[RMDB]
The record gives the reactivity of an RNA of 177 nucleotides to DMS.
RNA sequence: GGGAACGACUCGAGUAGAGUCGAAAAUUGGGAGCUUCUGGUGCGGCUAUUUUGCGUCAAGAUGCACUUGACACAUUACAUGCCUUUAUCAAGAAGAAUGAUGGUCGAAUGCCGGAAUAUUUGAAAACGAGUCCCUAAAUUUCGAUUUAGGGACUCGAAAAGAAACAACAACAACAAC
Reactivity to DMS in 0.01 (KOAc 150mM, MgCl2 10mM, bicine 150mM(pH8.5), 24C), signal-to-noise 1, nucleotides 027 to 126: u000u000g010g000g010a190g010c010u000u000c010u000g050g000u000g010c300g000g010c030u000a230u000u000u000u000g050c060g000u000c000a000a000g000a250u010g050c300a210c000u000u000g000a000c000a010c000a010u010u030a050c120a100u000g000c010c010u010u010u000a040u010c070a040a060g000a020a020g000a070a150u000g010a180u030g010g020u000c030g000a080a220u000g010c020c040g000g010a090a080u030a020u040u010u020g000a080a060a070a130
Reactivities are given for positions 27 through 126.